[RMDB]
RNA sequence: GGGAACGACUCGAGUAGAGUCGAAAAAGACUGCUCAACAAGAUGCGGAUACAACUGUGUCUGAUGAGACGACACGGUCUGCAGAAUCUACAGAGACAGUCCGCUGUCCAGAAUGUGAGUCGACUCAACUUAUCACAGAUGAUGAACGUGGUGAGACUGACGGAGACAUCUUCGGAUGUCUCCGUCAAAAAGAAACAACAACAACAAC
Reactivity to 2A3 in 0.01 (KOAc 150mM, MgCl2 10mM, bicine 150mM(pH8.5), 24C), signal-to-noise 1, nucleotides 027 to 156: a010g000a000c000u000g000c000u040c000a070a100c090a040a050g010a050u040g000c000g000g000a040u080a220c100a050a040c050u000g000u000g040u000c020u050g130a170u240g130a000g010a030c010g020a020c010a000c010g030g000u010c020u000g000c000a020g090a060a070u110c000u010a040c100a050g020a070g040a070c000a000g000u020c030c010g030c000u030g010u000c000c010a090g080a140a130u230g150u060g020a040g060u090c030g040a020c010u040c000a020a110c010u070u000a010u000c000a000c020a070g040a220u200g030a020u130g090a100a010c100g030u070g020g040u010g070a040g060a020c080
Conditions: 150 mM KOAc, 10 mM MgCl2 and 150 mM bicine (pH 8.5), 24 C. Chemical mapping of a 207-nucleotide RNA with 2A3. For 2A3 the reverse transcriptase was SuperScript II with manganese.